[RMDB]
RNA sequence: GGGAACGACUCGAGUAGAGUCGAAAAGAUAUGGAGUCAGGGUAGCGACUGUCGGAAACGACAGGAUCGCUAUAAUCCUGCUCCUAAGUCAAAGAGAUCUUAUUCAGUUCGCUGAAUAAGAUCUCAAGGACUUGAUUUUGUUCGCAAAAUCAAGUCCAAAAGAAACAACAACAACAAC
Reactivity to 2A3 in 0.01 (KOAc 150mM, MgCl2 10mM, bicine 150mM(pH8.5), 24C), signal-to-noise 1, nucleotides 027 to 126: g060a010u100a020u110g020g010a000g140u300c050a020g020g040g020u020a000g000c010g000a020c020u020g000u000c010g050g000a090a050a030c020g010a010c000a000g000g050a020u000c000g040c000u030a000u000a000a020u020c000c010u000g010c000u010c000c000u020a060a050g030u050c040a040a300a020g020a000g000a000u010c000u000u020a000u030u010c000a000g050u030u130c300g050c100u000g000a000a000u010a000a010g000a000u000c000u010c000a010a000
Reactivity to DMS in 0.01 (KOAc 150mM, MgCl2 10mM, bicine 150mM(pH8.5), 24C), signal-to-noise 1, nucleotides 027 to 126: g010a080u010a300u000g010g010a000g010u010c010a030g010g030g020u000a020g030c010g010a060c000u000g010u000c030g020g000a100a060a250c000g010a010c000a000g010g000a150u000c000g000c000u000a010u010a190a070u020c010c000u000g010c000u000c010c000u000a010a020g010u000c050a120a110a150g000a000g010a010u000c000u010u000a000u000u000c000a010g010u000u010c200g000c000u000g000a010a030u000a000a000g000a010u000c000u000c000a030a060